[RMDB]
RNA sequence: GGGAACGACUCGAGUAGAGUCGAAAAAGGUAGGACGGCACGGCUGCUCCGGUGAGCCGUGCCAUGGAAUCGGGAGCUCCAAGUGGGCCAUUUUUGGUAAGCAGAACUGGCGAUGCGGGAUGAACCGACGGUACUCUGUAUUCGUACAGAGUACCGUAAAAGAAACAACAACAACAAC
Reactivity to 2A3 in 0.01 (KOAc 150mM, MgCl2 10mM, bicine 150mM(pH8.5), 24C), signal-to-noise 2, nucleotides 027 to 126: a000g100g000u090a020g090g010a030c000g020g000c020a010c030g000g000c010u020g010c020u040c050c100g050g000u060g120a010g000c040c000g010u030g030c000c010a000u010g030g040a060a030u060c020g000g000g030a010g000c010u010c010c030a120a080g030u110g000g010g000c010c000a070u070u010u000u020u010g080g060u180a070a060g110c000a020g000a100a030c010u050g020g000c000g050a070u050g020c030g000g000g000a050u020g000a060a030c010c000g000
Reactivity to DMS in 0.01 (KOAc 150mM, MgCl2 10mM, bicine 150mM(pH8.5), 24C), signal-to-noise 3, nucleotides 027 to 126: a050g000g000u030a040g050g010a110c210g000g000c010a000c010g000g000c000u000g000c060u010c140c100g040g010u000g000a020g020c040c000g040u000g000c000c000a010u000g000g020a050a090u010c020g020g000g010a190g040c260u000c020c020a090a070g020u020g020g000g000c040c010a010u000u010u000u020u010g000g020u040a120a090g010c030a020g000a010a070c040u000g010g000c010g000a120u000g020c070g000g000g050a040u030g010a100a190c040c040g000
The record gives the reactivity of an RNA of 177 nucleotides to 2A3 and DMS.
For 2A3, 1,620 sequencing reads were counted.
The reactions ran in a buffer of 150 mM KOAc, 10 mM MgCl2 and 150 mM bicine (pH 8.5), at 24 C.
2A3 adducts were read by reverse transcription with SuperScript II with manganese.
For DMS the reverse transcriptase was MarathonRT.